This 177-nucleotide RNA was probed chemically with 2A3 and DMS. The DMS profile rests on 1,426 reads. In probing experiments dimethyl sulfate is read out at A N1 and C N3, which are open when not base-paired. Conditions: 150 mM KOAc, 10 mM MgCl2 and 150 mM bicine (pH 8.5), 24 C. The data come from the RNA Mapping Database (RMDB), library OK1LIB.
[RMDB]
RNA sequence: GGGAACGACUCGAGUAGAGUCGAAAAUGUGGCGCUGCGAAUGUCGUUGGUAUCAUUGAAGCGGCUAGUCGUUUACAACUGCCUGUAAAUAUUGUCGGAGUGCUUGCUUGUGCUGAAAAUAUGAUAACUCAGGUCGAUGAUUCGUCAUCGACCUGAGAAAAGAAACAACAACAACAAC
Reactivity to 2A3 in 0.01 (KOAc 150mM, MgCl2 10mM, bicine 150mM(pH8.5), 24C), signal-to-noise 2, nucleotides 027 to 126: u140g030u100g030g000c000g000c000u100g000c010g050a000a060u100g060u090c070g000u000u060g070g060u090a050u170c010a050u070u220g020a030a000g020c000g000g040c000u000a030g000u060c040g000u000u140u140a040c010a160a010c000u050g020c000c000u020g000u110a000a090a040u220a050u000u070g000u020c060g010g000a030g000u030g090c000u040u070g010c000u140u180g040u050g040c050u060g130a140a000a030a050u280a140u140g080a000u160a120a000
Reactivity to DMS in 0.01 (KOAc 150mM, MgCl2 10mM, bicine 150mM(pH8.5), 24C), signal-to-noise 1, nucleotides 027 to 126: u030g000u040g000g040c000g060c060u010g010c060g020a100a100u020g030u000c060g030u000u010g000g030u000a080u000c080a130u070u010g000a140a120g030c060g000g010c050u040a050g000u020c120g000u000u000u010a050c060a060a090c130u030g010c080c050u090g000u010a000a050a060u000a050u030u010g060u030c000g000g000a090g000u000g000c030u030u020g000c180u000u030g050u010g050c000u010g010a020a030a100a200u000a030u000g000a120u080a050a200